[RMDB]
RNA sequence: GGGAACGACUCGAGUAGAGUCGAAAAGCGUACUACCAGGCUUUUGACGACGGGGAGUGGCAAGAAGCUCCCAAAUAGGAGCUUUGAUGACCCAUGAAAGACGUCGAUAAGCCUGGUAUCGCAAAUCGCGACCCUAAGUUCGCUUAGGGUCGCGAAAGUCCUAAGUUAAGUUCGCUUAACUUAGGACAAAAGAAACAACAACAACAAC
Reactivity to DMS in 0.01 (KOAc 150mM, MgCl2 10mM, bicine 150mM(pH8.5), 24C), signal-to-noise 1, nucleotides 027 to 156: g020c040g010u010a090c120u010a040c000c010a000g000g000c000u000u010u000u010g010a180c070g000a020c030g000g040g060g040a300g000u000g000g010c040a130a230g010a020a090g010c010u000c000c050c030a010a110a130u000a060g010g010a010g000c010u000u000u000g000a100u000g000a100c300c000c050a040u000g020a190a050a230g010a150c010g060u000c000g020a100u010a030a030g000c030c000u020g000g010u000a000u000c010g010c010a010a070a120u010c000g020c000g000a090c000c000c000u000a020a020g010u000u010c300g030c070u000u000a010g020g030g070u000c010g010c000g000a000a030a090
Reactivity to 2A3 in 0.01 (KOAc 150mM, MgCl2 10mM, bicine 150mM(pH8.5), 24C), signal-to-noise 2, nucleotides 027 to 156: g000c010g020u090a090c050u020a010c010c010a000g000g020c010u050u090u060u070g160a070c040g010a000c010g040g010g010g030a160g040u100g010g000c030a070a100g000a010a000g000c010u010c030c030c030a070a120a050u200a040g000g020a020g000c000u000u010u030g070a100u130g050a050c040c040c020a040u080g050a010a110a030g110a010c000g000u000c010g040a040u050a080a000g000c000c010u000g030g000u000a000u000c000g000c010a090a000a000u020c000g000c000g000a000c000c000c000u010a020a050g010u070u200c170g020c180u010u010a010g000g000g000u000c000g000c000g000a000a000a000
The record gives the reactivity of an RNA of 207 nucleotides to DMS and 2A3. It was measured as part of the RMDB library RNAMAK. Values cover nucleotides 27 to 156. The DMS profile rests on 2,044 reads. The 2A3 profile rests on 2,216 reads.